Record summary
This 177-nucleotide RNA was probed chemically with 2A3 and DMS.
[RMDB]
RNA sequence: GGGAACGACUCGAGUAGAGUCGAAAAUAGGAAGGAGCCGUAGAUGUUUCGGUCGUGGCCAGAAUGGAGGCAACGAUGAAACACUUCCCUUUAAAAGUUGCGUCACUAACCUUGAAGAAAGGGACAACUGUAAAUGUAUCUUCGGAUACAUUUACAGAAAAGAAACAACAACAACAAC
Reactivity to 2A3 in 0.01 (KOAc 150mM, MgCl2 10mM, bicine 150mM(pH8.5), 24C), signal-to-noise 3, nucleotides 027 to 126: u110a030g090g030a060a060g080g070a030g050c080c040g070u040a010g000a270u040g040u010u010u030c050g040g020u000c000g000u010g000g000c020c010a010g100a190a170u300g140g070a070g020g000c000a010a000c010g000a020u030g000a010a010a010c000a010c000u020u010c000c000c000u000u100u080a130a170a010a000g030u060u070g030c020g040u030c000a000c050u040a070a080c010c000u040u040g040a110a090g100a140a090a010g020g010g020a020c030a030a030
Reactivity to DMS in 0.01 (KOAc 150mM, MgCl2 10mM, bicine 150mM(pH8.5), 24C), signal-to-noise 4, nucleotides 027 to 126: u010a110g000g010a120a140g000g010a060g010c040c060g010u000a090g000a140u010g010u000u000u000c010g020g020u000c000g020u000g000g000c020c000a140g010a190a150u030g010g010a150g010g000c010a040a010c010g000a010u000g000a020a020a030c020a040c100u000u000c010c010c020u000u000u010a060a070a100a080g010u010u000g010c100g000u000c080a100c110u000a060a150c020c010u000u000g000a140a100g000a120a010a010g010g000g010a060c160a040a180

It was measured as part of the RMDB library RFMREP.